[RMDB]
RNA sequence: GGGAACGACUCGAGUAGAGUCGAAAACGGCAAAAAAGCAAACUUGACCACCAAGGAUAAAAGAGAUCUUAUCCAAGGAUGCAAAAGAUAAUCUCAGUUUUGACACCCACUGAUCUCGAACUUAAAGAAAACCGAGACUACUUCGGUAGUCUCGGAACCGAUGUACCUAGUUCGCUAGGUACAUCGGAAAAGAAACAACAACAACAAC
Reactivity to 2A3 in 0.01 (KOAc 150mM, MgCl2 10mM, bicine 150mM(pH8.5), 24C), signal-to-noise 3, nucleotides 027 to 156: c010g050g020c030a030a010a020a080a020a020g090c070a130a110a040c080u110u060g050a100c040c000a020c030c020a080a030g000g000a010u030a020a030a040a000g030a020g010a010u000c020u010u030a010u020c010c000a030a050g020g000a030u100g000c010a020a030a080a040g050a090u140a110a130u100c080u010c100a050g000u000u000u030u080g060a040c030a060c020c020c020a030c080u060g010a010u010c000u020c010g020a040a060c040u140u240a130a030a110g050a070a180a020a010c000c000g000a010g000a010c000u000a000c000u030u050c120g030g000u000a000g010u000c000u000c010g000g000a000a000